[RMDB]
Structure probing data (DMS and 2A3) for a 207-nucleotide construct. It was measured as part of the RMDB library OK3TST. For 2A3 the reverse transcriptase was SuperScript II with manganese. The reactions ran in a buffer of 150 mM KOAc, 10 mM MgCl2 and 150 mM bicine (pH 8.5), at 24 C.

RNA sequence: GGGAACGACUCGAGUAGAGUCGAAAAGCAUCCGACAUGGUGCUGGGAUGCGAAUAUCAGCACAUUACUCCUCGAGAACGCAUGGGAGGAGGAUCAUCCAUGCAAUGGCUUUUGCCUAUCGUACCAUAGAGUCGUCGGUACGUAAGAUGACGACGGAACCCAGCAUAUGAUUCGUCAUAUGCUGGGUAAAAGAAACAACAACAACAAC
Reactivity to DMS in 0.01 (KOAc 150mM, MgCl2 10mM, bicine 150mM(pH8.5), 24C), signal-to-noise 2, nucleotides 027 to 156: g030c010a160u000c020c020g020a100c000a300u010g040g030u000g030c020u020g040g030g000a100u000g000c110g000a080a080u020a110u000c020a060g000c000a070c030a120u010u000a070c020u000c010c000u010c000g010a140g030a070a100c130g030c060a030u000g020g010g000a060g050g000a040g010g020a050u000c040a070u010c010c020a080u000g010c050a090a140u000g020g000c060u000u000u000u000g040c010c010u000a100u000c020g010u000a030c010c020a130u010a120g010a120g020u000c010g010u000c030g020g020u000a040c080g030u010a050a150g030a160u010g000a070c000g020a050c010g020g000a070
Reactivity to 2A3 in 0.01 (KOAc 150mM, MgCl2 10mM, bicine 150mM(pH8.5), 24C), signal-to-noise 5, nucleotides 027 to 156: g080c010a040u040c020c040g080a070c090a120u120g020g040u020g010c020u020g010g030g000a060u070g040c070g040a040a010u110a020u150c030a010g030c000a010c000a030u060u090a050c030u020c000c010u020c020g040a050g040a130a030c060g010c010a010u020g010g000g000a060g010g040a040g020g010a060u100c020a010u030c010c000a020u010g000c030a030a190u110g030g020c030u040u140u250u300g020c000c000u040a050u090c030g020u010a020c010c010a060u040a100g070a030g040u030c020g000u010c050g010g030u050a060c030g030u030a010a040g040a070u130g020a010c020g010a010c040g020g030a020
Reactivities are given for positions 27 through 156.